RNA sequence: GGGAACGACUCGAGUAGAGUCGAAAAACUGGGAAACCAGGGCCUAUCGAUCCUUUAUGUGCUUAAAUCUUAAGCCUAGAGGUGUCAGAAAAGUUACCACAGGGAUAACUGGCUUGUGGCAGCCAAGACGGUAGGGUUCAUUCGUGAACCCUACCGUAAAAGAAACAACAACAACAAC
Reactivity to DMS in 0.01 (KOAc 150mM, MgCl2 10mM, bicine 150mM(pH8.5), 24C), signal-to-noise 1, nucleotides 027 to 126: a050c000u000g000g000g000a000a280a080c000c000a000g000g000g020c000c000u000a130u020c180g080a020u000c000c010u010u010u010a080u020g070u110g110c000u000u000a010a110a030u030c180u050u000a080a010g000c000c000u000a000g000a000g000g000u070g000u010c060a150g030a050a120a130a060g010u040u060a040c000c000a010c130a080g060g000g000a090u010a080a120c150u030g000g000c000u000u000g020u000g010g030c140a030g010c020c070a050a080g000
Reactivity to 2A3 in 0.01 (KOAc 150mM, MgCl2 10mM, bicine 150mM(pH8.5), 24C), signal-to-noise 2, nucleotides 027 to 126: a000c000u000g000g000g000a120a000a000c000c000a010g000g160g000c000c010u030a110u090c050g020a010u000c000c000u000u000u030a240u300g120u150g030c020u130u150a070a140a280u070c040u030u030a010a010g050c000c000u000a010g000a000g000g000u020g120u080c000a000g080a040a090a000a000g000u000u040a020c000c000a030c040a100g060g070g070a120u030a090a090c050u070g090g000c000u030u090g000u020g020g070c020a050g040c000c000a040a090g130